[RMDB]
RNA sequence: GGGAACGACUCGAGUAGAGUCGAAAAGAUAUGGAUCAUGGACAUGCCUGGUGUCGGAAACGACAUCUGUGAGGCAACAGCCAUAUCCUAAGUCAAACGUACUGACAUGUUCGCAUGUCAGUACGAAUCGUCUUCAGGACUUCGGUCCUGAAGACGAAAAAGAAACAACAACAACAAC
Reactivity to DMS in 0.01 (KOAc 150mM, MgCl2 10mM, bicine 150mM(pH8.5), 24C), signal-to-noise 1, nucleotides 027 to 126: g010a000u000a220u000g000g000a010u010c230a050u000g020g000a050c080a230u000g000c020c000u020g020g010u000g000u040c000g030g000a080a070a170c000g010a000c000a020u000c040u000g020u010g040a050g010g000c000a050a090c130a120g000c000c000a000u000a030u020c000c000u010a040a110g000u010c010a080a090a220c010g000u000a010c020u010g000a000c000a020u000g000u000u000c170g000c000a000u000g040u000c000a000g000u000a010c000g000a030a030
Reactivity to 2A3 in 0.01 (KOAc 150mM, MgCl2 10mM, bicine 150mM(pH8.5), 24C), signal-to-noise 2, nucleotides 027 to 126: g000a040u060a020u140g010g000a020u110c120a080u180g000g000a060c070a130u050g000c020c000u010g040g000u010g020u000c000g010g040a100a070a030c040g030a010c000a000u000c050u080g300u150g110a070g000g050c000a030a030c000a100g080c010c010a020u000a030u060c000c010u080a120a070g040u070c060a150a040a070c020g000u000a000c020u000g010a010c000a000u010g010u090u100c300g000c130a000u000g000u000c000a000g000u020a000c030g000a000a000
The record gives the reactivity of an RNA of 177 nucleotides to DMS and 2A3. For 2A3, 1,961 sequencing reads were counted. The reactions ran in a buffer of 150 mM KOAc, 10 mM MgCl2 and 150 mM bicine (pH 8.5), at 24 C.